RNA sequence: GGGAACGACUCGAGUAGAGUCGAAAAGCUUUUUUUUCGGAUUAGGCGUGGAGGCGAAAGUCACCCUCCUCGCAUCGCAAGUUCGUGCUUGCGACUUACACGUAGGGCGAGGGGUGGGCGAAAGUCGAAAACACGAUGUUGUUCGCAACAUCGUGAAUGAUUCAUUUUUCUUCGGAAAAAUGAAUCAAAAAGAAACAACAACAACAAC
Reactivity to 2A3 in 0.01 (KOAc 150mM, MgCl2 10mM, bicine 150mM(pH8.5), 24C), signal-to-noise 5, nucleotides 027 to 156: g020c020u100u050u030u030u010u010u060u100c070g030g000a070u080u110a090g050g000c020g020u020g010g010a010g010g030c050g070a170a030a030g090u100c040a100c010c000c000u010c000c010u000c000g000c000a010u010c000g000c010a000a000g010u190u300c160g170u300g070c010u000u000g000c000g000a000c000u030u100a030c090a020c080g100u090a080g010g040g030c090g020a060g020g010g020g040u180g020g010g000c080g050a090a020a000g060u070c040g020a000a020a020a060c000a000c000g000a000u000g000u000u000g010u020u040c180g010c080a000a000c000a000u010c010g000u000g000a000a020
Reactivity to DMS in 0.01 (KOAc 150mM, MgCl2 10mM, bicine 150mM(pH8.5), 24C), signal-to-noise 2, nucleotides 027 to 156: g000c040u000u010u000u000u010u010u000u020c060g010g010a150u000u000a040g040g020c000g060u000g020g000a080g000g020c030g000a060a090a090g020u000c040a070c040c000c000u000c010c000u000c020g020c070a070u000c010g000c010a010a010g000u010u000c270g050u000g010c010u000u000g020c030g000a000c030u000u000a090c100a110c040g010u010a100g010g020g010c040g020a020g000g010g020g010u010g020g000g000c050g000a040a060a110g030u010c030g000a090a040a050a120c010a030c010g020a000u000g000u000u000g000u000u010c220g020c000a040a020c000a000u000c000g040u000g000a010a020